RNA sequence: GGGAACGACUCGAGUAGAGUCGAAAACAGAGAUCGCUGGGUAAGCGAGAUAUUGGCAGCGAUAAGCUCCUGAAGCGCGCACGGGAGCUUUUGACGCUGCAGGUCUCAGCUUACCUGUGCUGAAGCGCGCACGGCAACCGAAAGGUGCGUCGGGAAAUCGUACCUAAAGGUUCGCCUUUAGGUACGAAAAAGAAACAACAACAACAAC
Reactivity to DMS in 0.01 (KOAc 150mM, MgCl2 10mM, bicine 150mM(pH8.5), 24C), signal-to-noise 2, nucleotides 027 to 156: c080a200g010a140g000a040u010c030g060c020u010g030g020g010u000a020a040g030c000g000a030g050a090u000a040u010u000g030g000c010a020g000c000g000a130u000a040a070g030c020u000c000c000u000g020a060a020g020c060g010c000g000c010a300c070g000g000g020a040g020c010u030u010u000u000g010a170c030g010c020u000g010c000a000g000g000u000c030u000c020a130g020c030u000u000a010c000c000u010g030u000g000c010u010g020a040a120g020c000g000c010g000c010a300c050g000g010c000a100a080c020c000g010a190a150a270g040g010u000g020c030g030u000c040g010g030g010a060a110a110
Reactivity to 2A3 in 0.01 (KOAc 150mM, MgCl2 10mM, bicine 150mM(pH8.5), 24C), signal-to-noise 2, nucleotides 027 to 156: c050a010g090a000g030a130u130c010g000c030u020g000g000g020u000a010a010g000c010g020a010g000a000u060a200u080u220g180g000c010a010g000c000g090a130u050a180a000g010c000u000c010c000u020g040a170a050g010c010g000c000g000c070a020c040g000g000g010a000g000c000u010u000u010u050g030a030c010g000c020u000g010c000a010g020g040u000c010u000c010a060g000c000u000u000a000c000c000u000g000u000g040c010u090g020a090a020g010c000g000c000g000c030a020c020g040g000c020a040a030c010c020g110a110a050a030g000g000u030g050c050g000u050c050g000g020g050a010a120a050

Overview: The data come from the RNA Mapping Database (RMDB), library RNAMAK. This 207-nucleotide RNA was probed chemically with DMS and 2A3. The DMS profile rests on 3,899 reads. In probing experiments dimethyl sulfate is read out at A N1 and C N3, which are open when not base-paired. For DMS the reverse transcriptase was MarathonRT. 2A3 is a SHAPE reagent: it acylates the 2'-hydroxyl of flexible nucleotides of all four kinds.